[RMDB]
RNA sequence: GGGAACGACUCGAGUAGAGUCGAAAAUACUCACAUUUCGAUGUGAGUAACUGUCUAGUCGCUAGCGCCGAUCAAGCGCUAGCGUCUAGACUUUAUUGAUCGCCAGCUAACCUUUCGAGGUUAGCAAGGAAGCAGAUAGUUUCGACUAUCUGCUUCCAAAAGAAACAACAACAACAAC
Reactivity to 2A3 in 0.01 (KOAc 150mM, MgCl2 10mM, bicine 150mM(pH8.5), 24C), signal-to-noise 2, nucleotides 027 to 126: u030a010c000u000c000a000c020a000u050u090u100c170g130a000u000g000u010g010a000g000u000a000a030c020u020g020u000c000u000a000g010u000c000g000c020u010a000g000c010g000c030c030g200a300u210c080a060a000g010c010g000c000u010a000g000c000g010u010c000u000a000g000a000c010u010u020u010a010u010u040g060a020u100c060g020c140c030a020g000c000u000a020a000c000c000u030u110u160c270g120a030g010g010u000u030a000g020c020a020a020
Reactivity to DMS in 0.01 (KOAc 150mM, MgCl2 10mM, bicine 150mM(pH8.5), 24C), signal-to-noise 2, nucleotides 027 to 126: u000a000c010u000c000a010c000a010u000u000u010c160g010a020u000g010u020g000a000g000u000a010a040c040u010g000u000c000u000a000g000u000c000g010c000u000a000g010c010g020c010c060g020a160u000c300a150a120g010c000g030c000u000a000g010c020g000u000c000u000a000g010a000c000u000u000u010a050u010u010g000a100u000c090g000c060c040a140g010c000u000a000a000c000c000u000u000u010c160g010a020g010g010u000u000a000g000c000a020a010